[RMDB]
RNA sequence: GGGAACGACUCGAGUAGAGUCGAAAAGAUAUGGAGGGAGAAAUUAACAGGACUCGUUAUCGGAAACGAUAAUGUUGCUGUUUAUUUCGACGAUCUCCUAAGUCAAACAGAACGUUCGCGUUCUGAAGCUUAAAUGAGUCUUCGGACUCAUUUAAGCAAAAGAAACAACAACAACAAC
Reactivity to 2A3 in 0.01 (KOAc 150mM, MgCl2 10mM, bicine 150mM(pH8.5), 24C), signal-to-noise 2, nucleotides 027 to 126: g050a000u030a030u270g000g000a000g000g000g010a010g020a000a000a000u040u020a000a020c010a020g020g070a080c040u040c130g040u020u000a000u000c020g020g000a090a050a040c010g000a000u020a000a010u100g040u040u070g160c010u000g000u000u000u000a020u020u000u000c050g060a150c010g000a020u000c000u000c000c000u000a130a020g040u010c050a050a070a100c010a030g000a000a000c020g010u150u110c300g020c000g240u000u040c020u010g020a050a050
Reactivity to DMS in 0.01 (KOAc 150mM, MgCl2 10mM, bicine 150mM(pH8.5), 24C), signal-to-noise 3, nucleotides 027 to 126: g000a040u000a300u010g000g010a020g000g020g000a040g000a000a010a010u000u000a010a020c000a000g010g010a090c130u010c040g010u000u000a010u000c000g010g000a130a120a190c010g010a000u000a000a000u000g020u000u000g020c000u000g000u000u000u010a030u010u000u000c020g010a090c230g010a040u000c000u000c000c010u000a030a100g000u000c040a120a160a250c010a000g000a010a000c000g000u000u020c220g030c020g000u000u000c000u000g000a080a110
Conditions: 150 mM KOAc, 10 mM MgCl2 and 150 mM bicine (pH 8.5), 24 C. Structure probing data (2A3 and DMS) for a 177-nucleotide construct.